An RNA of 177 nucleotides, treated with DMS and 2A3 and read out base by base. It was measured as part of the RMDB library OK2TRN. DMS adducts were read by reverse transcription with MarathonRT. Conditions: 150 mM KOAc, 10 mM MgCl2 and 150 mM bicine (pH 8.5), 24 C.

RNA sequence: GGGAACGACUCGAGUAGAGUCGAAAAAAACAUUGAGGGAUGGUCCUUUUCUUAGCCAUGUGCAGUUUAGGAACUUCAUAGCCCACGUUGAUGCUAAAUCAAGAUCAGUCAGGCUCCUAGGUGCCCCAUAGGCAUGCAAAUUCGUUUGCAUGCCUAUAAAAGAAACAACAACAACAAC
Reactivity to DMS in 0.01 (KOAc 150mM, MgCl2 10mM, bicine 150mM(pH8.5), 24C), signal-to-noise 2, nucleotides 027 to 126: a040a050a050c050a030u000u000g010a090g010g000g010a060u000g000g010u000c030c020u000u000u000u000c030u020u000a110g040c010c020a080u000g020u010g020c030a100g010u000u010u000a040g010g000a030a050c020u000u010c050a100u000a110g020c010c010c040a070c150g010u000u000g010a040u010g020c090u010a070a060a070u010c080a010a050g000a050u010c050a090g030u010c090a120g000g000c020u000c030c020u010a100g000g000u000g010c040c010c020c190
Reactivity to 2A3 in 0.01 (KOAc 150mM, MgCl2 10mM, bicine 150mM(pH8.5), 24C), signal-to-noise 2, nucleotides 027 to 126: a000a010a030c070a070u080u030g000a050g080g040g010a050u040g020g070u040c000c000u030u030u030u060c040u040u110a030g000c000c020a220u180g100u180g020c030a070g010u040u030u080a030g010g010a020a030c000u050u020c010a100u060a070g020c070c040c010a010c070g060u050u020g040a060u020g030c100u130a080a060a060u100c050a020a010g000a080u060c000a000g030u030c010a040g000g010c010u000c010c010u000a020g020g000u010g030c000c000c020c000